[RMDB]
RNA sequence: GGGAACGACUCGAGUAGAGUCGAAAACAAGAUCGGUGGAUAGCAGCCCUAUCAAUAUCUAGGAGAACUGUGCUAUGUUUAGAAGAUUAGGUAGUCUCUAAACAGACCAAUUUACCUGCUGAACAAAAAAAUCCAAUGGCGUUCGCGCCAUUGGAAAUCAUACAAAUAAGUUCGCUUAUUUGUAUGAAAAAGAAACAACAACAACAAC
Reactivity to DMS in 0.01 (KOAc 150mM, MgCl2 10mM, bicine 150mM(pH8.5), 24C), signal-to-noise 2, nucleotides 027 to 156: c050a110a090g010a080u010c060g010g010u000g000g010a120u000a070g000c050a090g010c040c040c010u000a150u000c040a080a130u000a100u000c120u010a060g020g010a300g020a090a050c050u010g030u000g010c050u000a060u000g020u000u000u000a020g000a050a060g020a020u000u000a090g020g030u000a090g000u000c010u000c010u000a030a060a050c010a010g000a030c040c040a050a080u010u000u000a060c020c010u000g020c020u000g000a040a140c040a030a000a020a090a090a010a180u000c010c000a000a020u000g020g010c000g040u000u000c300g040c000g050c010c000a010u010u000g010g000a000a010a020
Reactivity to 2A3 in 0.01 (KOAc 150mM, MgCl2 10mM, bicine 150mM(pH8.5), 24C), signal-to-noise 4, nucleotides 027 to 156: c030a030a060g040a130u090c080g020g030u050g040g030a080u050a070g010c010a010g010c010c010c000u050a050u100c060a110a110u090a090u230c070u060a040g020g030a070g040a080a070c030u040g020u030g040c040u040a040u080g010u010u000u010a090g010a300a010g000a050u070u040a050g050g070u060a030g020u010c000u000c000u010a010a010a000c010a010g070a050c010c020a010a030u030u070u080a040c010c010u020g060c080u110g080a110a040c080a050a060a030a040a000a000a040u000c000c000a000a000u000g010g000c010g010u030u040c180g000c000g000c060c000a000u000u000g000g010a000a000a000
An RNA of 207 nucleotides, treated with DMS and 2A3 and read out base by base. For DMS, 5,150 sequencing reads were counted. The reactions ran in a buffer of 150 mM KOAc, 10 mM MgCl2 and 150 mM bicine (pH 8.5), at 24 C. It was measured as part of the RMDB library M2RFPK.